[RMDB]
Structure probing data (2A3 and DMS) for a 177-nucleotide construct. It was measured as part of the RMDB library TTRDES. The reactions ran in a buffer of 150 mM KOAc, 10 mM MgCl2 and 150 mM bicine (pH 8.5), at 24 C. For 2A3 the reverse transcriptase was SuperScript II with manganese.

RNA sequence: GGGAACGACUCGAGUAGAGUCGAAAAGAUAUGGACCACAGUUCUUUUGACGGCUAUGUAUCGGAAACGAUACAUGAGCCGAUAAGAACGUGGUCCUAAGUCAAAACUGGAGUGUUCGCACUCCAGAGCCAGAUGAUAAGUUCGCUUAUCAUCUGGCAAAAGAAACAACAACAACAAC
Reactivity to 2A3 in 0.01 (KOAc 150mM, MgCl2 10mM, bicine 150mM(pH8.5), 24C), signal-to-noise 4, nucleotides 027 to 126: g020a000u020a010u040g000g010a000c010c000a000c060a140g030u010u000c040u080u250u300u300g300a300c160g000g000c000u000a000u000g000u000a010u000c000g000g040a020a010a000c000g000a000u010a010c000a000u030g090a000g000c010c010g010a010u070a010a000g000a010a010c010g000u000g010g000u000c000c000u000a020a000g010u000c010a000a010a080a140c010u000g000g000a020g010u010g060u100u280c300g100c150a000c000u000c010c000a000g000a000
Reactivity to DMS in 0.01 (KOAc 150mM, MgCl2 10mM, bicine 150mM(pH8.5), 24C), signal-to-noise 2, nucleotides 027 to 126: g000a020u000a070u000g000g000a030c010c000a000c010a160g040u000u000c000u000u000u000u000g010a170c080g010g010c000u000a020u000g000u000a000u010c000g000g000a050a010a050c000g010a000u000a000c000a000u000g010a010g020c000c010g020a030u000a010a000g000a010a000c010g020u000g000g000u000c000c000u000a000a080g000u000c000a120a080a140a250c000u000g000g000a010g020u000g010u000u020c250g020c000a020c010u000c000c010a010g010a090
Annotation: Reactivities are rounded to 0.1 and cut off at 0 and 3.